[RMDB]
Overview:
Conditions: 150 mM KOAc, 10 mM MgCl2 and 150 mM bicine (pH 8.5), 24 C. Structure probing data (DMS and 2A3) for a 177-nucleotide construct. As a SHAPE reagent, 2A3 marks flexible, mostly unpaired nucleotides at the ribose 2'-OH. DMS (dimethyl sulfate) methylates the pairing face of unpaired adenines and cytosines. For 2A3, 2,220 sequencing reads were counted.
RNA sequence: GGGAACGACUCGAGUAGAGUCGAAAAGUGGACACUCGGUUUGCCCUGUGCCCCAUCAGGAGGUGGACACUCGGUUUAUCCUGAGCCCCAUCAGGAGGUGGACACUCGGUUUGCCCUGUGCCCCAUCUCUAUGGUUUCGGUUCGCCGAAACCAUAGAAAAAGAAACAACAACAACAAC
Reactivity to DMS in 0.01 (KOAc 150mM, MgCl2 10mM, bicine 150mM(pH8.5), 24C), signal-to-noise 1, nucleotides 027 to 126: g000u010g040g010a030c050a030c010u010c270g000g020u000u030u010g000c030c010c020u000g010u000g000c050c040c020c010a100u010c040a090g020g010a190g050g030u020g000g000a110c190a100c010u000c120g030g020u000u010u010a130u030c170c010u000g000a010g000c190c060c000c010a070u000c040a050g000g020a100g010g050u000g000g010a150c020a030c030u010c240g020g010u000u010u010g000c000c010c020u000g000u000g010c000c000c000c010a120u000c070
Reactivity to 2A3 in 0.01 (KOAc 150mM, MgCl2 10mM, bicine 150mM(pH8.5), 24C), signal-to-noise 2, nucleotides 027 to 126: g210u200g030g000a010c000a030c020u010c030g000g010u030u030u090g040c000c020c000u040g000u010g020c130c110c000c000a050u030c020a040g300g000a050g050g000u010g020g020a030c040a020c110u010c000g030g120u080u130u120a100u150c000c030u000g030a030g030c090c000c000c000a020u000c000a000g300g010a010g000g000u030g020g000a010c010a010c030u010c010g040g000u040u040u080g000c010c010c000u000g000u020g000c000c050c030c010a120u050c040